[RMDB]
RNA sequence: GGGAACGACUCGAGUAGAGUCGAAAAGAAAGAAAGAAGCGAGCUGGCGCAGCCGCACGGGCAACCGUCAAUCCAGCACUUCACAAGUCUUGUCGUUCUGACAGGAAAUCCAUCAACCCACCGGGAAAAAAGGACUACAGCUUCGGCUGUAGUCCAACCUGUUUGUUAAGUUCGCUUAACAAACAGGAAAAGAAACAACAACAACAAC
Reactivity to 2A3 in 0.01 (KOAc 150mM, MgCl2 10mM, bicine 150mM(pH8.5), 24C), signal-to-noise 2, nucleotides 027 to 156: g030a000a050a000g030a000a140a000g010a050a000g020c040g120a010g000c020u010g010g020c030g030c120a050g090c100c120g080c040a010c020g030g010g000c070a100a030c020c020g040u060c020a000a020u070c000c000a000g030c000a050c030u020u050c070a030c060a190a120g070u010c010u020u020g000u000c000g070u210u300c140u300g010a000c010a000g000g070a010a010a030u040c020c000a030u030c000a050a090c010c010c040a070c040c080g030g000g050a080a070a040a000a030a010g000g000a040c000u000a010c000a020g000c030u120u100c240g120g000c000u000g000u000a000g000u000c000c000a000a000
The data come from the RNA Mapping Database (RMDB), library M2RFPK. The record gives the reactivity of an RNA of 207 nucleotides to 2A3. For 2A3 the reverse transcriptase was SuperScript II with manganese.